[RMDB]
RNA sequence: GGGAACGACUCGAGUAGAGUCGAAAACCUUUGUGUGGGAGUUAGUAAUUAUGUCGCUUGGUAUAUAUGUAUUUAUAUACUUGACAUAUAUUACUUUACACCUCAGACAAUGGAAGAUUAUUCCAUGCGAUAGUGCUAAGUUCGCUUAGCACUAUCGAAAAGAAACAACAACAACAAC
Reactivity to 2A3 in 0.01 (KOAc 150mM, MgCl2 10mM, bicine 150mM(pH8.5), 24C), signal-to-noise 1, nucleotides 027 to 126: c010c000u010u050u010g050u000g000u000g020g020g000a100g020u000u000a030g000u020a000a010u000u020a000u000g010u010c000g020c130u130u190g000g010u000a010u020a010u010a000u020g050u070a170u240u080u010a000u000a000u000a000c000u060u060g000a020c000a020u000a010u020a000u010u000a000c000u000u000u010a020c040a030c020c000u030c000a030g010a030c000a030a030u030g000g010a090a010g010a060u170u120a080u200u060c020c030a010u070g070
Reactivity to DMS in 0.01 (KOAc 150mM, MgCl2 10mM, bicine 150mM(pH8.5), 24C), signal-to-noise 1, nucleotides 027 to 126: c010c000u010u010u000g020u000g010u020g000g000g000a230g030u010u000a010g020u000a010a000u000u000a010u000g010u010c000g030c300u010u010g010g010u000a000u000a000u000a000u000g000u020a040u020u000u010a000u000a010u000a000c000u010u010g000a020c000a010u000a010u020a000u000u000a000c000u000u010u000a060c070a130c060c010u000c020a020g000a010c020a050a020u010g010g000a050a050g010a160u010u020a100u000u000c020c000a070u000g010